[RMDB]
RNA sequence: GGGAACGACUCGAGUAGAGUCGAAAAAGAUCCACGCUACGGCGUGGAUCACACGUUCAUCCCUAUUGGGACGGAAGUAGGCAUAGUGCCGAAGGAACGCAUUAGACAUGCGCUACGGCGCAUGACACACAUCAGAGUCACUUCGGUGACUCUGAAACUUGGCAUUAGGGUUCGCCCUAAUGCCAAGAAAAGAAACAACAACAACAAC
Reactivity to 2A3 in 0.01 (KOAc 150mM, MgCl2 10mM, bicine 150mM(pH8.5), 24C), signal-to-noise 2, nucleotides 027 to 156: a000g000a010u000c000c000a000c000g000c070u030a020c260g090g010c000g000u000g000g000a000u000c000a000c000a000c000g000u000u000c010a000u010c020c000c020u220a300u200u300g010g000g000a000c000g010g030a030a000g020u010a030g000g030c030a080u110a230g150u180g230c000c000g000a000a000g040g000a030a000c000g000c010a010u000u200a110g040a080c020a000u000g000c020g000c000u020a000c170g050g000c020g000c000a000u000g050a000c000a000c000a000c000a230u070c000a000g000a000g000u000c000a000c010u030u080c240g150g000u000g000a000c000u010c010u000g000a000a000a000